Structure probing data (DMS and 2A3) for a 207-nucleotide construct. The DMS profile rests on 2,917 reads.
RNA sequence: GGGAACGACUCGAGUAGAGUCGAAAAAAAUGGGGUAGCUUACGACAAUGGUGCGCAGAUAUCUGUUGUAUUAAAAGAAGAGCAACAAGGCAUGAAUUCUAAUUUUGUUUUUUUGGCAUCAAUUAUUGAUGAGAAUAAUAAGUAGUAUCAAUAAAUGAUUUGCUAUAAGUUUCGACUUAUAGCAAAUAAAAGAAACAACAACAACAAC
Reactivity to DMS in 0.01 (KOAc 150mM, MgCl2 10mM, bicine 150mM(pH8.5), 24C), signal-to-noise 2, nucleotides 027 to 156: a020a060a090u010g030g000g020g050u000a050g000c020u010u000a060c000g000a080c040a110a080u000g000g030u000g000c040g070c130a120g020a100u010a080u000c040u000g030u000u010g020u000a100u000u000a110a060a100a070g010a120a110g010a020g010c020a050a040c040a070a050g000g000c060a060u000g010a110a130u000u020c050u020a060a080u000u010u000u010g000u000u000u000u000u000u000u000g010g010c110a210u000c030a070a050u000u000a050u000u000g000a040u000g000a160g000a090a060u010a070a150u000a070a060g010u010a100g010u000a060u000c000a020a050u000a020a030a150u000g040
Reactivity to 2A3 in 0.01 (KOAc 150mM, MgCl2 10mM, bicine 150mM(pH8.5), 24C), signal-to-noise 3, nucleotides 027 to 156: a000a000a040u150g000g000g000g000u020a010g020c010u030u030a020c050g020a020c030a030a020u060g030g000u050g000c020g000c030a020g030a090u050a050u020c060u030g070u020u030g010u030a120u060u120a130a020a020a020g100a030a010g010a010g010c000a000a030c000a020a010g080g000c030a060u040g040a070a050u160u060c070u170a070a120u020u060u100u040g030u070u040u010u000u000u030u030g060g000c030a030u020c020a010a070u090u050a020u070u000g010a020u030g010a030g060a040a060u190a130a020u060a130a000g060u050a010g010u030a040u070c000a020a020u250a040a020a220u210g030

The data come from the RNA Mapping Database (RMDB), library OK3TST. Values cover nucleotides 27 to 156. 2A3 adducts were read by reverse transcription with SuperScript II with manganese.